[RMDB]
RNA sequence: GGGAACGACUCGAGUAGAGUCGAAAAGAUAUGGAUGACUAAGAUGUUCCAAUUCUGGACAACAGCGUCUGGUCGGAAACGACCAUGACGACAUGUCCUAUUGGAACAUCUUAGUCAUCCUAAGUCACUAUAGUAAUACGUUCGCGUAUUACUAUAGAAAAGAAACAACAACAACAAC
Reactivity to DMS in 0.01 (KOAc 150mM, MgCl2 10mM, bicine 150mM(pH8.5), 24C), signal-to-noise 7, nucleotides 027 to 126: g010a050u000a300u010g010g000a010u000g000a020c000u000a010a010g010a010u010g010u000u000c010c010a010a030u000u010c300u000g000g010a020c010a050a130c300a230g010c020g010u000c000u000g000g000u000c010g010g000a110a120a220c000g010a010c000c000a010u010g010a000c000g010a030c130a160u000g010u000c000c000u000a020u000u000g010g010a010a010c000a000u000c000u000u000a000g000u000c000a000u000c000c000u000a000a050g010u000c050a290